Structure probing data (2A3) for a 207-nucleotide construct.
2A3 adducts were read by reverse transcription with SuperScript II with manganese.
For 2A3, 781 sequencing reads were counted.
[RMDB]
RNA sequence: GGGAACGACUCGAGUAGAGUCGAAAAGGUAGGCAUGCCUGGGAGCCAGGCUUUGUCCUAGCGCAGGAUGGGGGGUCAUAGAGGGCUGAGGACUGCGUGAGGAUGAGCAGUCAGGAAGUAGAGCCAUGUGCACCUGGGACAAUCAGGAUCUUGCCACCCUAAUUGGCAUUUUCGAAUGCCAAUUAGGAAAAGAAACAACAACAACAAC
Reactivity to 2A3 in 0.01 (KOAc 150mM, MgCl2 10mM, bicine 150mM(pH8.5), 24C), signal-to-noise 1, nucleotides 027 to 156: g140g010u050a030g000g040c000a000u000g010c000c000u000g000g000g030a010g130c040c000a010g000g000c000u120u000u080g060u020c010c000u010a090g000c010g010c030a040g050g050a050u120g010g010g000g000g000g010u020c020a000u100a030g070a060g020g000g010c040u070g040a030g040g020a010c030u030g000c000g030u060g040a010g110g000a020u060g040a000g000c040a010g060u150c000a030g060g000a070a000g010u070a030g010a010g000c050c020a060u100g010u030g000c020a050c020c010u000g000g000g050a050c070a030a000u050c010a020g050g000a030u060c000u000u100g000c010c040a000c020